[RMDB]
RNA sequence: GGGAACGACUCGAGUAGAGUCGAAAAGCCAUGAGUCGCAACGCAAAGCCGCGGCAAGUGGAGUUAACGAGAAGAGACUAGGCUUUGGUUUCUUCAAGUGAAGCGGUCACCAAUCAGGUGUGGUAGUAGGAGCCUGCAUGGUUCGCCAUGCAGGCAAUCGAAGACUAUUGUUCGCAAUAGUCUUCGAAAAAGAAACAACAACAACAAC
Reactivity to DMS in 0.01 (KOAc 150mM, MgCl2 10mM, bicine 150mM(pH8.5), 24C), signal-to-noise 2, nucleotides 027 to 156: g000c010c010a100u010g020a300g050u000c020g020c020a060a060c040g020c050a160a220a290g000c010c020g050c000g030g000c020a050a290g010u000g020g000a100g030u000u000a110a080c030g000a300g000a030a020g010a040g020a030c030u000a050g050g010c140u010u010u000g010g040u020u000u000c000u010u000c000a060a300g000u010g000a110a140g030c020g040g020u000c000a130c060c030a040a080u000c120a080g010g000u010g060u010g020g020u000a080g020u000a160g000g000a110g010c000c040u000g030c020a010u000g030g020u000u000c280g020c000c000a000u000g000c000a000g000g010c000a000a010
Reactivity to 2A3 in 0.01 (KOAc 150mM, MgCl2 10mM, bicine 150mM(pH8.5), 24C), signal-to-noise 3, nucleotides 027 to 156: g030c000c020a000u020g020a000g030u020c030g000c060a070a070c070g040c140a170a250a060g070c100c060g010c040g000g010c040a040a010g030u010g000g030a090g030u100u060a050a020c030g010a020g000a080a010g000a020g020a000c010u020a040g140g280c060u160u200u150g020g000u010u010u000c010u000u020c000a030a000g030u030g030a040a000g050c040g040g070u090c010a010c060c010a030a120u200c060a080g010g020u030g030u070g030g040u040a090g040u040a050g040g160a040g000c000c000u000g000c000a010u000g030g040u010u030c060g010c030c000a000u010g000c010a000g000g000c000a000a000